About this RNA: Structure probing data (DMS and 2A3) for a 177-nucleotide construct. The 2A3 profile rests on 798 reads. Reactivities are rounded to 0.1 and cut off at 0 and 3. The data come from the RNA Mapping Database (RMDB), libraries RFM100 and RFMREP.

RNA sequence: GGGAACGACUCGAGUAGAGUCGAAAAUCGUUGUCUAAACAGUAAUCCAACCCAGUACGAGAGGAACCGUUGGUUCAGAUAAUUGGUAACUGCGGUUAGCUGAAAAGCUAGUGCCGCCAAGCUACCAUUAACCCAGAACUUUCGAGUUCUGGGUUAAAAAAGAAACAACAACAACAAC
Reactivity to DMS in 0.01 (KOAc 150mM, MgCl2 10mM, bicine 150mM(pH8.5), 24C), signal-to-noise 5, nucleotides 027 to 126: u020c090g000u010u010g000u000c040u020a100a090a120c130a100g020u040a070a060u040c000c020a030a060c010c020c070a060g010u010a150c040g000a210g010a190g010g000a090a060c190c300g010u000u020g000g000u000u000c060a090g000a060u020a060a090u020u010g010g010u000a010a020c000u000g010c000g020g010u000u000a010g000c000u010g010a080a020a100a010g010c010u010a030g000u020g010c000c000g000c030c140a040a030g020c070u010a000c000c000a060
Reactivity to 2A3 in 0.01 (KOAc 150mM, MgCl2 10mM, bicine 150mM(pH8.5), 24C), signal-to-noise 2, nucleotides 027 to 126: u060c010g000u000u040g050u020c030u060a000a060a090c040a100g050u150a090a060u010c010c050a000a000c000c000c000a000g050u020a010c010g010a010g010a020g170g000a020a020c010c010g040u070u040g090g000u030u000c010a000g000a120u070a100a070u300u050g000g000u000a010a010c000u000g000c000g000g000u000u000a000g000c000u040g100a060a090a080a060g000c000u000a000g070u080g240c000c010g000c000c000a020a000g000c000u000a000c000c000a000